Chemical mapping of a 177-nucleotide RNA with DMS. Values cover nucleotides 27 to 126. For DMS the reverse transcriptase was MarathonRT. The RNA was probed in 150 mM KOAc, 10 mM MgCl2 and 150 mM bicine (pH 8.5) at 24 C.

RNA sequence: GGGAACGACUCGAGUAGAGUCGAAAAGAAAGUUCUACUGAACCGCUGGCGGAUGAACCAGUUGUUAAAGCUUCGAAAGGUAAAGCCGUUCUAGAGGAGAUUCUCGAGCCCGUCGGACAACCCGCCGUAUCAAGAGCGAGUUCGCUCGCUCUUGAUAAAAAGAAACAACAACAACAAC
Reactivity to DMS in 0.01 (KOAc 150mM, MgCl2 10mM, bicine 150mM(pH8.5), 24C), signal-to-noise 1, nucleotides 027 to 126: g010a070a140a050g020u010u010c020u000a130c050u020g000a060a040c010c020g000c000u000g030g010c030g000g010a120u000g030a260a110c000c010a030g010u000u010g040u000u030a060a080a190g000c020u000u000c030g020a080a030a090g000g030u010a040a140a160g000c020c030g050u010u000c000u000a110g020a160g010g020a070g000a230u010u000c060u000c010g000a090g030c040c020c020g000u000c050g010g010a060c070a060a130c040c040c020g000c160c040g010